RNA sequence: GGGAACGACUCGAGUAGAGUCGAAAAGCCUGCAUUCGUGCAGGCCCUAUUGCGUACUACGAGCAUACUUGACGAUAAGCCUGUCCCAAAUAGGACAGGCUUUUGACGUCAACUAUGAACUACUCGUAUCGCUGAACGUAGCAUUUCGAUGCUACAAAUAUCUCACACAGUUCGCUGUGUGAGAUAUAAAAGAAACAACAACAACAAC
Reactivity to DMS in 0.01 (KOAc 150mM, MgCl2 10mM, bicine 150mM(pH8.5), 24C), signal-to-noise 2, nucleotides 027 to 156: g000c020c000u000g010c020a120u010u010c280g050u010g020c010a000g010g040c010c010c000u010a080u010u010g010c030g020u000a130c110u010a000c000g010a030g010c000a070u010a070c050u000u000g020a020c000g000a190u000a040a030g010c010c000u000g010u000c000c000c010a060a160a230u000a050g010g000a040c000a000g030g010c000u000u010u000u010g010a250c060g020u000c000a020a050c070u000a100u000g000a100a160c030u000a040c000u000c000g000u000a000u000c100g000c040u000g010a090a170c120g030u000a030g030c000a090u000u000u010c270g020a100u000g000c000u000a020c010a050a090
Reactivity to 2A3 in 0.01 (KOAc 150mM, MgCl2 10mM, bicine 150mM(pH8.5), 24C), signal-to-noise 2, nucleotides 027 to 156: g030c000c000u000g030c040a060u070u080c170g170u080g010c030a000g000g000c010c000c000u130a170u090u130g030c020g000u030a060c040u000a010c000g000a000g010c000a000u000a010c010u030u020g010a000c000g060a040u000a070a000g000c000c000u000g000u000c000c000c040a080a090a030u100a050g000g000a000c010a010g000g000c000u000u000u040u080g180a090c000g000u000c000a000a000c010u020a010u000g000a070a020c020u140a050c010u170c000g010u000a030u170c000g000c020u030g060a030a000c070g000u000a000g000c000a000u100u110u060c190g050a020u050g010c000u000a020c000a000a040